[RMDB]
RNA sequence: GGGAACGACUCGAGUAGAGUCGAAAAUGUACAUCAAAAGCAAAGGUUUUCGCUACCGAAAAAGUUUAAAUAAUGGUUUAAUAUAUUUGGUACUCAUUUUAAUAAAAAGAGAAUACAUUUUGAGCUAUGCGUAGUUUUAAUUCGUUAAAACUACGCAAAAAGAAACAACAACAACAAC
Reactivity to 2A3 in 0.01 (KOAc 150mM, MgCl2 10mM, bicine 150mM(pH8.5), 24C), signal-to-noise 2, nucleotides 027 to 126: u040g020u020a040c040a110u080c060a030a220a000a000g180c060a100a030a090g020g050u000u180u000u000c000g040c060u000a000c000c000g130a150a000a000a000a000g000u040u080u090a160a210a250u240a150a240u110g010g030u080u030u070a040a070u200a040u040a080u290u000u200g050g000u030a010c020u000c030a020u000u100u240u060a300a200u160a040a080a020a000a000g000a000g000a020a050u020a120c010a010u000u010u110u090g040a040g000c020u080a000
Reactivity to DMS in 0.01 (KOAc 150mM, MgCl2 10mM, bicine 150mM(pH8.5), 24C), signal-to-noise 1, nucleotides 027 to 126: u030g000u080a000c110a130u000c000a090a050a070a110g000c090a090a040a060g000g000u010u010u000u000c060g000c080u020a030c020c010g000a030a020a060a150a080g020u010u010u000a060a020a050u000a030a230u010g000g000u000u020u030a030a050u040a080u000a060u000u010u000g030g000u020a080c060u020c000a040u000u000u020u050a080a110u090a130a050a040a000a130g010a060g060a150a140u000a020c020a060u000u010u010u000g000a100g010c030u030a030
An RNA of 177 nucleotides, treated with 2A3 and DMS and read out base by base. Reactivities are given for positions 27 through 126. The RNA was probed in 150 mM KOAc, 10 mM MgCl2 and 150 mM bicine (pH 8.5) at 24 C. The data come from the RNA Mapping Database (RMDB), library OK1LIB.